[RMDB]
RNA sequence: GGGAACGACUCGAGUAGAGUCGAAAAGUAAAGAUCGCUCUUUUACUCGGCAUGAUACCACCGUUAUCGGGUCAACAGAGUAGUUGCAAAUGAUAACAAUGCUCAGGGUUAUGCUCUCGCUGCCUAAAAAAUCGUUUAACGUUCGCGUUAAACGAAACAUCAAUACGUCGUUCGCGACGUAUUGAUGAAAAGAAACAACAACAACAAC
Reactivity to 2A3 in 0.01 (KOAc 150mM, MgCl2 10mM, bicine 150mM(pH8.5), 24C), signal-to-noise 8, nucleotides 027 to 156: g080u090a040a030a020g040a110u110c070g010c080u040c020u040u070u030u030a040c030u020c010g010g000c010a010u090g000a020u090a150c010c030a020c020c020g040u070u040a020u060c030g020g000g090u110c000a010a010c020a010g210a040g050u180a020g010u040u020g020c040a030a110a200u160g040a060u030a080a020c010a060a080u080g000c010u030c070a040g030g010g000u090u100a040u140g010c010u010c010u020c080g030c050u050g020c020c030u110a060a050a020a020a020a050u020c000g000u010u000u000a010a000c010g000u020u050c260g000c000g100u000u000a000a000a000c000g010a020a000a000
Reactivity to DMS in 0.01 (KOAc 150mM, MgCl2 10mM, bicine 150mM(pH8.5), 24C), signal-to-noise 2, nucleotides 027 to 156: g040u000a060a020a130g000a090u010c070g010c140u000c020u000u030u000u000a050c000u020c010g020g000c020a130u000g000a070u000a060c030c020a170c040c050g010u000u010a040u000c100g010g020g010u000c000a110a150c100a100g010a120g060u010a070g040u000u000g000c020a060a060a180u000g000a120u000a090a030c030a040a050u010g000c020u000c060a100g000g020g010u020u000a050u020g000c010u000c040u000c030g020c040u000g000c030c030u010a000a020a080a090a050a070u000c020g020u020u010u000a020a010c010g010u000u010c300g020c030g030u010u000a010a000a010c010g010a000a020a100